[RMDB]
RNA sequence: GGGAACGACUCGAGUAGAGUCGAAAAGGGGGAGGUGAUACACAUUGCCUAUCUCGGCGAUCUUUCGGUGUAUCACGUUCGUCUGAAAAGUGGGCAGAUGAUUAGCGCCCAGCUACAAAACGCCCAACUAGGGCCUCAUAUUCGUAUGAGGCCCUAGAAAAGAAACAACAACAACAAC
Reactivity to 2A3 in 0.01 (KOAc 150mM, MgCl2 10mM, bicine 150mM(pH8.5), 24C), signal-to-noise 1, nucleotides 027 to 126: g040g010g000g040g000a040g000g000u000g000a000u020a000c020a000c020a070u060u110g110c050c020u170a250u240c210u060c120g000g030c000g000a060u050c120u160u300u240c160g100g000u040g000u050a000u020c030a000c000g000u000u000c040g240u000c040u010g100a160a040a020a000g160u110g020g000g000c000a000g000a180u030g030a110u110u000a020g000c000g020c030c070c000a040g000c000u020a040c020a040a200a020a000c030g000c000c000c000a000a030
Reactivity to DMS in 0.01 (KOAc 150mM, MgCl2 10mM, bicine 150mM(pH8.5), 24C), signal-to-noise 2, nucleotides 027 to 126: g020g000g010g000g010a020g000g000u010g000a010u000a030c010a020c020a110u010u000g020c010c000u010a100u010c270u010c270g000g000c000g010a040u000c300u000u010u000c240g070g020u010g000u000a010u000c000a010c000g000u000u000c020g000u000c010u000g010a050a050a110a170g000u010g010g000g050c020a100g010a190u010g000a200u000u010a020g030c000g010c020c010c010a140g000c000u000a020c100a070a070a090a150c250g000c000c000c020a080a260

Chemical mapping of a 177-nucleotide RNA with 2A3 and DMS. The DMS profile rests on 1,627 reads.